Chemical mapping of a 177-nucleotide RNA with 2A3 and DMS. DMS adducts were read by reverse transcription with MarathonRT. Source: RMDB library OK1LIB, as collected in RNAgym. The 2A3 profile rests on 1,861 reads. For DMS, 3,598 sequencing reads were counted.

[RMDB]
RNA sequence: GGGAACGACUCGAGUAGAGUCGAAAAGCUCUAGGAGACUAGAGCGAUACGUUAGAGAGCUCGUGGCAUGACUAACGGAUAGCCAGGUACGAGGUAGCCAGAGGACAUAGCUAUAGCUAUGUCCAAAGAGGUAUCAUACCUUCGGGUAUGAUACCUCAAAAGAAACAACAACAACAAC
Reactivity to 2A3 in 0.01 (KOAc 150mM, MgCl2 10mM, bicine 150mM(pH8.5), 24C), signal-to-noise 2, nucleotides 027 to 126: g010c000u000c000u000a020g020g060a150g070a070c000u010a000g000a000g020c000g000a010u010a010c050g000u030u050a000g000a000g000a020g110c020u020c080g150u070g130g030c030a030u150g020a070c010u000a050a000c020g030g050a060u090a050g040c000c000a000g050g080u090a070c030g020a050g000g030u050a000g050c020c030a030g020a060g080g000a000c010a000u000a000g020c000u140a010u020a300g000c010u000a000u030g000u000c000c000a000a000a000
Reactivity to DMS in 0.01 (KOAc 150mM, MgCl2 10mM, bicine 150mM(pH8.5), 24C), signal-to-noise 3, nucleotides 027 to 126: g010c020u000c000u000a000g000g010a220g030a230c010u010a000g000a030g000c000g000a050u030a050c080g000u000u000a020g000a150g000a130g020c050u000c090g030u010g000g000c000a160u000g030a110c010u010a070a100c160g000g000a110u050a040g000c030c030a090g000g000u010a040c090g020a070g000g010u020a010g030c000c030a110g020a220g000g000a000c000a000u000a000g000c010u020a080u030a160g040c000u000a000u000g030u000c000c000a000a030a080